[RMDB]
RNA sequence: GGGAACGACUCGAGUAGAGUCGAAAAGAAAGUUAGGGGAUCGAAGAUGAUUAGAUACCGUUGUAGUCCUAACCAUAAACUUUACUAUCCAAGAGUUGGAUUAGUUAUUUUAUACUCUUCCAGUACUUACUUGAUAUAGAUUCGUCUAUAUCAAGUAAAAAGAAACAACAACAACAAC
Reactivity to DMS in 0.01 (KOAc 150mM, MgCl2 10mM, bicine 150mM(pH8.5), 24C), signal-to-noise 9, nucleotides 027 to 126: g000a100a100a070g000u010u000a040g000g010g000g010a070u010c030g010a120a190g010a090u010g010a100u010u020a100g000a090u010a070c090c070g000u000u000g010u010a140g000u010c020c000u000a030a060c040c100a090u010a050a040a080c070u000u010u010a050c070u010a080u000c020c020a060a120g010a160g010u010u000g000g000a020u010u010a020g010u000u010a060u020u010u010u010a070u010a090c040u000c040u000u000c020c020a090g000u010a080c120u000
Reactivity to 2A3 in 0.01 (KOAc 150mM, MgCl2 10mM, bicine 150mM(pH8.5), 24C), signal-to-noise 9, nucleotides 027 to 126: g050a020a060a000g010u020u020a020g010g010g020g040a030u070c030g040a080a050g060a110u210g010a040u080u110a080g070a130u160a200c050c060g010u050u120g030u050a030g030u010c000c000u010a020a020c020c010a020u090a050a050a010c000u030u070u070a040c020u030a020u010c010c000a070a020g140a120g270u140u060g010g010a020u030u040a010g000u000u040a050u030u100u020u020a120u040a040c040u030c000u080u020c020c010a030g040u040a070c020u010